[RMDB]
RNA sequence: GGGAACGACUCGAGUAGAGUCGAAAAAAUGCUGCCAAGCUUGAUCCUGAUGACGUAUGUUCCUACUUAGCAGCUGCAAUGCAGUUCUUCGAGGGGACGUGUCCCGAAGACUGGACCAGCUAUGGGACUACCUACGAAAGUUCGCUUUCGUAGGUAGAAAAGAAACAACAACAACAAC
Reactivity to DMS in 0.01 (KOAc 150mM, MgCl2 10mM, bicine 150mM(pH8.5), 24C), signal-to-noise 4, nucleotides 027 to 126: a020a040u010g000c010u010g010c040c070a050a100g000c030u000u000g010a050u020c010c020u000g020a080u020g010a100c150g010u000a060u020g000u000u000c010c020u010a090c110u000u000a100g020c200a020g010c010u010g000c010a080a080u010g000c010a030g010u020u010c000u000u000c020g010a250g000g010g000g000a080c090g010u020g010u030c020c010c020g000a030a020g000a040c030u000g010g000a060c120c010a030g000c020u010a070u020g000g010g000a280
Reactivity to 2A3 in 0.01 (KOAc 150mM, MgCl2 10mM, bicine 150mM(pH8.5), 24C), signal-to-noise 7, nucleotides 027 to 126: a000a000u190g000c020u040g040c010c020a080a020g010c010u060u050g040a080u120c000c000u060g050a130u100g040a030c050g120u140a050u150g040u020u010c010c010u030a120c040u080u100a040g060c070a010g000c030u000g000c030a030a050u100g000c000a010g010u090u060c000u000u010c030g080a260g020g010g020g060a050c090g120u200g070u080c000c020c000g040a010a000g010a020c010u010g010g050a050c230c030a000g020c000u040a120u070g000g000g020a020